[RMDB]
RNA sequence: GGGAACGACUCGAGUAGAGUCGAAAAGUACGAUUUUUCGAAAUCGUACGAAGGUCAGGUGGCAGCACCACGACACUGGUCGCGGCGACCGAGGCGAACAGAAUAUGUGUAAUUUCGAUUACACAAACCCGAUCAUUGUUUUCGAACAAUGAUCGGGAAAAGAAACAACAACAACAAC
Reactivity to 2A3 in 0.01 (KOAc 150mM, MgCl2 10mM, bicine 150mM(pH8.5), 24C), signal-to-noise 2, nucleotides 027 to 126: g000u020a020c030g010a020u070u020u010u040u070c120g070a000a030a000u000c020g020u010a000c000g030a100a030g130g020u000c020a020g020g010u040g120g040c040a000g020c000a020c030c000a030c070g110a050c030a040c100u080g020g020u040c130g000c010g090g000c020g040a020c000c000g020a110g020g010c050g010a010a010c030a040g120a180a100u190a130u180g000u020g020u010a010a010u020u060u130c260g090a030u040u000a000c000a020c000a050a020a010
Reactivity to DMS in 0.01 (KOAc 150mM, MgCl2 10mM, bicine 150mM(pH8.5), 24C), signal-to-noise 1, nucleotides 027 to 126: g000u010a000c000g030a000u040u000u000u020u080c230g000a000a000a000u000c000g020u000a000c010g000a030a080g040g050u000c000a270g010g060u000g000g000c090a060g010c020a060c000c010a010c100g000a110c220a110c270u000g060g000u000c060g070c040g000g000c040g000a020c010c000g020a110g010g000c030g000a050a090c060a050g000a110a100u000a110u010g000u010g000u000a010a040u000u040u020c060g000a080u030u000a000c000a000c000a010a080a160
The record gives the reactivity of an RNA of 177 nucleotides to 2A3 and DMS. It was measured as part of the RMDB library M2PK50. Reactivities are given for positions 27 through 126. The RNA was probed in 150 mM KOAc, 10 mM MgCl2 and 150 mM bicine (pH 8.5) at 24 C. For DMS the reverse transcriptase was MarathonRT. For DMS, 708 sequencing reads were counted.